[RMDB]
RNA sequence: GGGAACGACUCGAGUAGAGUCGAAAAGUUGGUACAGGUAAUAUUGUCGGUGUAUCUACUGCAAUAUUUAUAGGAGGACCUGGUGCAGUAUUUUGGAUGUGGAUUACUGCGUUUUUAGGUGCAAGUAUCACGGAAGUAGCUUCGGCUACUUCCGUGAAAAAGAAACAACAACAACAAC
Reactivity to 2A3 in 0.01 (KOAc 150mM, MgCl2 10mM, bicine 150mM(pH8.5), 24C), signal-to-noise 1, nucleotides 027 to 126: g000u050u080g000g030u100a110c020a110g110g040u060a000a000u020a000u050u000g240u050c050g000g000u000g000u000a020u050c080u080a000c000u020g000c000a000a000u000a000u020u020u020a130u050a020g030g020a020g150g000a000c000c000u000g000g050u020g000c060a100g000u000a000u000u150u100u190g290g110a290u130g130u270g300g000a000u210u000a000c000u000g000c020g000u000u000u000u230u300a020g000g020u150g030c060a030a000g100u050a000
Reactivity to DMS in 0.01 (KOAc 150mM, MgCl2 10mM, bicine 150mM(pH8.5), 24C), signal-to-noise 1, nucleotides 027 to 126: g010u000u000g010g000u040a050c020a140g030g030u030a010a030u000a040u000u000g000u130c160g000g060u000g110u020a110u000c040u110a000c000u000g000c000a010a000u020a000u000u040u020a300u010a180g010g000a160g010g000a010c030c000u100g000g000u000g000c000a080g000u000a010u000u000u020u080g050g000a100u000g010u000g000g000a110u000u000a030c020u000g010c090g000u000u020u010u030u080a030g000g020u010g000c120a050a170g000u040a040
This 177-nucleotide RNA was probed chemically with 2A3 and DMS. The DMS profile rests on 1,155 reads. For 2A3 the reverse transcriptase was SuperScript II with manganese. DMS adducts were read by reverse transcription with MarathonRT. The reactions ran in a buffer of 150 mM KOAc, 10 mM MgCl2 and 150 mM bicine (pH 8.5), at 24 C. For 2A3, 267 sequencing reads were counted. It was measured as part of the RMDB library OK1LIB.